[RMDB]
RNA sequence: GGGAACGACUCGAGUAGAGUCGAAAAGAUAUGGAGAUGGCGGUCGAGGACUAUAGAAUCGGAAACGAUUCUACGAAUCUACCCACCGAUACCAUCUCCUAAGUCAAAAGACAGCUUCGGCUGUCAACAAUGUUAAAGCCUUCGGGCUUUAACAUUGAAAAGAAACAACAACAACAAC
Reactivity to DMS in 0.01 (KOAc 150mM, MgCl2 10mM, bicine 150mM(pH8.5), 24C), signal-to-noise 3, nucleotides 027 to 126: g000a010u000a300u000g000g000a040g010a010u000g000g010c030g030g010u000c100g030a160g000g000a120c090u000a230u000a010g000a010a010u000c000g030g030a080a030a110c000g000a000u000u000c000u000a000c120g010a060a050u000c070u010a110c120c010c100a240c080c010g000a130u010a210c010c000a000u010c000u000c000c000u000a010a040g010u000c030a080a090a120a130g000a010c000a000g010c010u000u010c160g020g000c000u010g010u010c000a050a160
Reactivity to 2A3 in 0.01 (KOAc 150mM, MgCl2 10mM, bicine 150mM(pH8.5), 24C), signal-to-noise 2, nucleotides 027 to 126: g000a020u050a010u110g000g000a000g010a000u010g020g090c100g030g010u060c120g100a190g090g020a020c030u040a020u000a100g000a000a000u000c000g000g030a070a050a000c010g000a000u020u000c000u000a020c010g110a050a170u050c050u120a140c000c050c090a020c080c010g020a030u120a160c000c000a000u030c000u000c000c000u020a020a020g000u000c010a000a100a000a130g000a010c000a000g000c030u090u140c300g230g010c030u000g000u010c000a010a010